[RMDB]
RNA sequence: GGGAACGACUCGAGUAGAGUCGAAAAUGGAGGGCUGGGUACCUGCAGCAUGGGCUAAAAAGCACCAUCCGCGUUGGUAUCGUGAAGUCCGCAGUAAAGAUGAUGCUCGCGCCAACGCUAAAGGCCAAUUUUAUACCCCAUUCGUGGGGUAUAAAAUAAAAGAAACAACAACAACAAC
Reactivity to 2A3 in 0.01 (KOAc 150mM, MgCl2 10mM, bicine 150mM(pH8.5), 24C), signal-to-noise 2, nucleotides 027 to 126: u060g020g030a090g060g030g000c050u110g120g010g000u020a020c010c000u010g020c020a030g000c020a020u010g000g020g000c020u070a230a140a100a000a000g060c080a210c090c000a010u030c030c050g000c000g010u030u030g000g010u030a030u080c040g020u070g080a040a000g020u010c020c000g000c020a010g050u150a030a130a030g030a040u080g000a010u050g010c010u000c010g050c020g010c030c000a050a030c040g000c090u090a130a040a010g040g000c010c000a000
Reactivity to DMS in 0.01 (KOAc 150mM, MgCl2 10mM, bicine 150mM(pH8.5), 24C), signal-to-noise 7, nucleotides 027 to 126: u010g000g010a210g030g010g010c010u000g020g010g010u000a020c010c010u000g010c060a100g010c170a030u000g010g000g010c030u010a050a080a060a130a070g020c020a130c000c000a020u000c060c120g010c040g010u000u000g020g010u000a040u000c020g020u000g010a090a080g020u010c020c020g010c060a060g010u000a060a090a130g000a050u000g000a160u000g000c040u000c040g010c210g000c010c010a060a080c110g020c050u000a060a080a130g010g010c030c050a080
Source information: Conditions: 150 mM KOAc, 10 mM MgCl2 and 150 mM bicine (pH 8.5), 24 C. This 177-nucleotide RNA was probed chemically with 2A3 and DMS. 2A3 adducts were read by reverse transcription with SuperScript II with manganese. The 2A3 profile rests on 4,644 reads. For DMS, 9,454 sequencing reads were counted.